[RMDB]
RNA sequence: GGGAACGACUCGAGUAGAGUCGAAAACCAGGCCGGAAGCCGGCCAGGCCCCGCGCGAAGAAGAGGAAGAAGAGAAGCCGUCGCGCUGAGGACAGCGCAGGUUUCGCCCGCAGACGCCCCGGCUCCGUUGUUUACCAUUAUUCGUAAUGGUAAACAAAAAAGAAACAACAACAACAAC
Reactivity to DMS in 0.01 (KOAc 150mM, MgCl2 10mM, bicine 150mM(pH8.5), 24C), signal-to-noise 7, nucleotides 027 to 126: c020c010a120g000g020c090c010g020g010a150a110g010c030c010g010g040c110c060a040g000g000c030c030c030c070g020c080g020c080g000a110a070g000a090a060g010a070g010g010a090a060g010a110a090g000a140g010a030a030g000c010c000g000u020c150g010c010g020c000u000g000a170g010g000a180c040a030g000c000g040c020a100g000g000u000u010u000c010g000c050c040c020g000c060a050g000a100c150g000c020c030c010c010g010g000c020u000c010c030g000
Reactivity to 2A3 in 0.01 (KOAc 150mM, MgCl2 10mM, bicine 150mM(pH8.5), 24C), signal-to-noise 7, nucleotides 027 to 126: c000c000a010g030g050c020c010g040g030a140a040g060c020c000g000g020c010c000a020g010g000c000c000c000c020g020c010g000c030g040a100a090g040a060a030g040a120g110g030a060a110g050a080a010g080a050g010a040a010g010c010c010g100u220c110g000c010g000c000u010g030a140g110g150a100c020a020g000c000g000c020a000g000g010u010u010u030c010g010c000c000c000g000c010a020g020a070c030g010c010c010c000c000g010g000c000u010c010c000g030
Structure probing data (DMS and 2A3) for a 177-nucleotide construct. DMS adducts were read by reverse transcription with MarathonRT.